[RMDB]
RNA sequence: GGGAACGACUCGAGUAGAGUCGAAAACAAGGUUUGGAAAACAUUGCUUUUAAUGUUGUUAAACAAGGCCAUUUUAUUGGUGUUGAGGGUGAACUACCUGUAGCUGUAGUCAAUGAUAAGAUCUUCACAUUUGCUAACCGUUCGCGGUUAGCAAAUGAAAAGAAACAACAACAACAAC
Reactivity to DMS in 0.01 (KOAc 150mM, MgCl2 10mM, bicine 150mM(pH8.5), 24C), signal-to-noise 1, nucleotides 027 to 126: c080a060a060g000g050u010u010u010g020g000a140a090a030a050c020a050u000u000g000c220u010u000u000u020a040a050u000g010u000u000g010u010u000a070a110a110c060a050a120g000g040c020c020a000u000u010u010u000a090u020u000g010g020u000g010u000u000g010a080g010g050g020u000g010a060a070c050u010a070c020c040u010g030u010a070g000c120u010g000u010a020g050u000c070a090a100u000g030a120u000a040a110g040a070u010c010u000u000c140a120